[RMDB]
RNA sequence: GGGAACGACUCGAGUAGAGUCGAAAAUGGUGCAGUGGCCGGUGAUCACCACCGUGUUGGACAUGCCGCUGACGCUGACAAUGCUGUCGUUGCAGGCGAUUGUCCGGUUCACGUUGACGCCGGAGACUCUUACUAAAUCAUUCGUGAUUUAGUAAGAAAAAGAAACAACAACAACAAC
Reactivity to DMS in 0.01 (KOAc 150mM, MgCl2 10mM, bicine 150mM(pH8.5), 24C), signal-to-noise 9, nucleotides 027 to 126: u010g010g020u000g020c140a070g020u010g000g010c010c000g000g000u000g000a150u010c060a080c220c050a100c130c020g010u010g000u030u050g010g000a020c010a020u010g000c030c010g010c020u020g010a060c070g010c010u000g010a110c220a090a110u040g010c060u030g010u010c010g010u020u010g020c050a200g010g010c000g010a120u020u010g010u000c000c010g010g000u010u020c010a020c080g000u010u010g000a080c030g000c000c000g000g010a100g010a090c120
Reactivity to 2A3 in 0.01 (KOAc 150mM, MgCl2 10mM, bicine 150mM(pH8.5), 24C), signal-to-noise 9, nucleotides 027 to 126: u140g050g010u100g030c060a050g030u060g090g020c020c000g000g010u020g040a300u040c040a030c110c000a020c030c040g030u030g040u050u150g010g010a010c010a040u050g020c020c000g010c020u040g010a040c020g000c010u040g040a140c100a100a120u230g040c100u160g040u060c040g300u300u120g020c120a130g040g000c030g090a120u040u070g000u010c000c000g020g010u120u090c020a020c030g010u020u090g020a020c020g000c000c000g010g000a020g030a020c020